[RMDB]
RNA sequence: GGGAACGACUCGAGUAGAGUCGAAAACGUGUGGACCCGACCAGACUGUGCUGAAACGGAAUUUGAGAAUGGGAACAGGUAUAUGGAACGAAAUGGAGGGUGGAAAAAGGCUCCAAACCCAUGCUUCAGUUAGCCCUCUGACUUAUCUGUUCAUACCCGACUAUAAAGGGUUCGCCCUUUAUAGUCGAAAAGAAACAACAACAACAAC
Reactivity to 2A3 in 0.01 (KOAc 150mM, MgCl2 10mM, bicine 150mM(pH8.5), 24C), signal-to-noise 3, nucleotides 027 to 156: c040g060u100g030u050g040g030a040c000c030c060g030a050c060c020a040g030a080c050u070g030u120g060c030u110g040a070a090a060c040g030g080a090a100u080u090u160g070a070g030a100a060u130g030g040g000a000a030c010a040g050g040u020a070u000a030u090g170g020a060a030c050g030a150a050a030u120g010g000a010g010g010g000u060g020g000a080a040a010a010a000g030g000c030u050c060c010a030a070a110c020c010c000a020u060g000c030u050u070c020a040g000u030u100a020g000c020c000c000u030c000u000g010a000c010u030u070a050u060c040u060g010u000u010c000a000u040a090c000c040
Reactivity to DMS in 0.01 (KOAc 150mM, MgCl2 10mM, bicine 150mM(pH8.5), 24C), signal-to-noise 2, nucleotides 027 to 156: c050g010u010g000u000g000g020a120c020c000c010g020a150c000c060a120g010a110c030u010g020u000g030c030u010g020a080a100a150c060g030g020a070a220u010u010u020g010a080g010a120a090u000g000g010g010a080a050c030a020g000g010u000a050u000a130u000g030g040a060a300c050g000a060a090a130u000g000g010a070g010g020g030u000g000g000a030a080a080a120a000g000g000c000u010c030c050a020a050a130c050c020c030a150u000g020c060u000u000c020a100g000u000u000a160g000c020c010c000u000c030u020g020a080c050u000u000a060u000c040u000g010u000u000c030a110u000a080c060c040